Structure probing data (DMS and 2A3) for a 177-nucleotide construct. Reactivities are given for positions 27 through 126. Source: RMDB library OK2TST, as collected in RNAgym. The 2A3 profile rests on 982 reads.
[RMDB]
RNA sequence: GGGAACGACUCGAGUAGAGUCGAAAAUGGUAGAUAUAACUUGGUUUAAUCGUUCAGUAACUGCAUUUUUUAUCAUUCGCAUCAGAGAAAUCUGUGACCUGCAAUAUCCAGGUUAUAAUACAGACAAUGAUAACUUCUUCUUCGGAAGAAGUUAUCAAAAAGAAACAACAACAACAAC
Reactivity to DMS in 0.01 (KOAc 150mM, MgCl2 10mM, bicine 150mM(pH8.5), 24C), signal-to-noise 3, nucleotides 027 to 126: u000g000g010u000a000g000a150u000a040u010a000a010c000u000u000g000g000u000u000u000a070a110u010c170g010u010u000c050a040g020u000a120a070c130u000g020c100a010u020u000u010u000u010u010a040u000c130a080u010u020c220g020c090a060u000c100a080g010a070g000a050a070a080u000c010u000g030u000g000a120c190c020u000g000c130a040a070u010a030u010c020c010a010g020g000u000u000a010u000a020a070u010a030c010a070g010a110c200a070a060
Reactivity to 2A3 in 0.01 (KOAc 150mM, MgCl2 10mM, bicine 150mM(pH8.5), 24C), signal-to-noise 2, nucleotides 027 to 126: u100g060g000u030a040g000a250u040a010u020a070a000c020u030u030g010g060u060u080u110a150a090u130c070g030u140u050c060a010g020u040a040a020c010u030g090c020a040u020u050u000u000u050u250a170u140c060a050u190u170c130g060c110a100u090c040a070g000a010g000a050a060a020u000c010u000g030u000g070a090c000c030u000g000c000a010a020u000a000u170c020c000a010g000g000u000u000a020u010a010a010u040a010c000a000g110a020c030a110a110

For 2A3 the reverse transcriptase was SuperScript II with manganese.